[RMDB]
An RNA of 177 nucleotides, treated with DMS and 2A3 and read out base by base. DMS adducts were read by reverse transcription with MarathonRT. The 2A3 profile rests on 5,371 reads. Values cover nucleotides 27 to 126. 2A3 adducts were read by reverse transcription with SuperScript II with manganese. The RNA was probed in 150 mM KOAc, 10 mM MgCl2 and 150 mM bicine (pH 8.5) at 24 C.
RNA sequence: GGGAACGACUCGAGUAGAGUCGAAAAGUGCAGCGUCAUCAAGAUUCACGUGUGCCGCACGGCACACGUAUCGGUUUUCAAGUGUAGUCAUCGUGCGUGAAUCUUGAUGAUGCUGCACCAGCAAAGACGUGAACAAUUAGUUCGCUAAUUGUUCACGAAAAGAAACAACAACAACAAC
Reactivity to DMS in 0.01 (KOAc 150mM, MgCl2 10mM, bicine 150mM(pH8.5), 24C), signal-to-noise 3, nucleotides 027 to 126: g010u000g000c010a010g020c000g000u000c000a010u000c010a010a000g000a020u000u000c010a020c020g020u000g010u020g010c020c030g030c220a110c270g000g020c020a000c010a030c100g000u000a000u000c030g020g000u010u010u000u000c130a120a170g000u020g030u000a100g000u000c130a040u000c040g010u000g000c210g010u000g000a000a000u000c010u000u000g000a010u010g000a000u000g000c000u000g000c000a000c010c030a070g010c140a060a120a150g000a190
Reactivity to 2A3 in 0.01 (KOAc 150mM, MgCl2 10mM, bicine 150mM(pH8.5), 24C), signal-to-noise 3, nucleotides 027 to 126: g010u010g000c000a000g010c000g020u000c000a000u000c000a000a000g000a010u010u000c000a010c050g030u050g010u030g020c000c010g110c090a090c120g000g010c010a000c000a000c020g000u000a010u010c000g020g020u010u030u020u200c120a160a120g060u080g080u300a090g050u080c030a030u030c020g020u030g040c010g010u010g000a000a000u000c010u000u010g000a000u000g000a000u000g000c000u000g000c000a000c010c000a000g010c020a020a080a030g110a070